[RMDB]
RNA sequence: GGGAACGACUCGAGUAGAGUCGAAAAGGGCUUGGAGGCUGCAGAUAGUGACCCCAGUGUGCCGCCUUACGACACAGCCCUCAUCUAUGACUACGAGGGUGACGGCUCGGUGGCGGGGACGCUGAGCUCCAUCCUGUCCAGCCAGGGCGAUGAGGAACCCUACCCAAAAUUUCGAUUUUGGGUAGGGAAAAGAAACAACAACAACAAC
Reactivity to 2A3 in 0.01 (KOAc 150mM, MgCl2 10mM, bicine 150mM(pH8.5), 24C), signal-to-noise 2, nucleotides 027 to 156: g040g000g040c030u040u040g040g040a040g070g000c040u050g000c030a000g020a090u070a020g100u090g100a080c000c030c020c010a010g010u070g030u050g120c000c000g000c000c000u040u110a080c030g010a010c010a000c010a060g030c010c020c000u030c000a050u020c010u160a160u220g160a150c040u070a050c250g000a010g000g040g000u040g050a070c050g100g020c080u020c030g000g000u010g000g040c040g000g010g010g010a000c020g000c000u020g010a010g010c000u040c030c030a000u020c000c000u000g020u020c030c000a010g000c000c010a020g020g050g000c030g030a080u100g040a040g000g050a030a040

The data come from the RNA Mapping Database (RMDB), library OK3TST. The record gives the reactivity of an RNA of 207 nucleotides to 2A3. Reactivities are given for positions 27 through 156. For 2A3, 1,134 sequencing reads were counted. The reactions ran in a buffer of 150 mM KOAc, 10 mM MgCl2 and 150 mM bicine (pH 8.5), at 24 C.